[RMDB]
RNA sequence: GGGAACGACUCGAGUAGAGUCGAAAAGCGAAUCGUUCUGCGAUUCGUAACUGCAGGUUGCUCCGGUUGAUCGAUAGAUUGUAAGGUUUGUCGGUCGUUUUAAUCGUGUCUUACAACACGAUGAUGUUUUCAUGAUCCAUUUCGAUGGAUCAUGAAAAAAAGAAACAACAACAACAAC
Reactivity to DMS in 0.01 (KOAc 150mM, MgCl2 10mM, bicine 150mM(pH8.5), 24C), signal-to-noise 3, nucleotides 027 to 126: g000c000g010a000a000u000c000g050u000u050c210u030g000c020g010a010u000u000c000g030u000a040a060c060u000g010c160a110g000g010u000u000g010c040u000c050c040g020g000u020u030g020a010u000c010g010a040u000a020g000a020u010u000g000u090a160a140g010g000u000u010u010g020u000c000g000g000u000c030g010u040u010u000u000a160a020u000c000g000u000g000u020c040u000u050a140c300a120a030c000a000c000g010a010u000g010a120u010g040u020
Reactivity to 2A3 in 0.01 (KOAc 150mM, MgCl2 10mM, bicine 150mM(pH8.5), 24C), signal-to-noise 3, nucleotides 027 to 126: g020c000g000a000a000u010c000g010u150u180c120u300g000c010g010a000u010u000c000g010u020a060a010c020u080g040c080a070g090g000u170u120g040c040u000c010c020g060g070u120u240g010a020u020c000g000a000u000a020g020a030u010u040g130u250a100a170g080g000u020u020u000g020u000c020g000g010u010c010g000u030u060u030u180a060a020u010c000g000u000g000u000c070u110u240a110c040a030a000c000a010c050g000a000u010g030a070u140g080u040
Chemical mapping of a 177-nucleotide RNA with DMS and 2A3. For 2A3 the reverse transcriptase was SuperScript II with manganese. The RNA was probed in 150 mM KOAc, 10 mM MgCl2 and 150 mM bicine (pH 8.5) at 24 C. It was measured as part of the RMDB libraries RFM100 and RFMREP.